[RMDB]
About this RNA:
Structure probing data (DMS and 2A3) for a 177-nucleotide construct. It was measured as part of the RMDB library OK2TRN. For 2A3, 27,116 sequencing reads were counted. For DMS, 24,993 sequencing reads were counted. The RNA was probed in 150 mM KOAc, 10 mM MgCl2 and 150 mM bicine (pH 8.5) at 24 C. DMS adducts were read by reverse transcription with MarathonRT.
RNA sequence: GGGAACGACUCGAGUAGAGUCGAAAACGUCUGGGCGGCAACUCGCUGCUGGACCUGGUGGUCUUUGGUCGCGCGGCAGGUCUGCAUCUGCAAGAGUCUAUCGCCGAGCAGGGCGCACUGCGCGAUGCGUCAUCUCAUUUUUCGAAAUGAGAUGACGAAAAGAAACAACAACAACAAC
Reactivity to DMS in 0.01 (KOAc 150mM, MgCl2 10mM, bicine 150mM(pH8.5), 24C), signal-to-noise 9, nucleotides 027 to 126: c130g010u000c030u010g010g020g020c020g010g020c040a110a110c180u010c140g010c030u000g020c020u000g000g010a040c020c080u000g010g020u010g010g010u000c040u000u010u000g010g010u000c010g010c030g030c010g010g010c090a120g010g000u010c020u000g010c030a130u010c040u000g010c030a090a160g000a100g000u010c130u000a120u010c150g010c020c060g000a170g010c030a030g000g000g000c030g010c070a160c020u000g000c020g010c020g000a020u000g010
Reactivity to 2A3 in 0.01 (KOAc 150mM, MgCl2 10mM, bicine 150mM(pH8.5), 24C), signal-to-noise 9, nucleotides 027 to 126: c030g030u020c020u150g090g070g030c010g010g020c030a080a160c100u070c190g030c030u020g000c010u020g030g010a030c000c030u080g070g050u100g030g050u050c000u090u080u170g120g000u020c010g000c010g000c010g050g000c030a050g040g250u000c020u040g020c010a290u020c020u050g000c030a130a080g040a030g210u060c050u160a190u120c070g000c020c010g000a020g000c010a010g000g050g000c040g000c050a060c060u050g000c020g000c010g020a020u070g080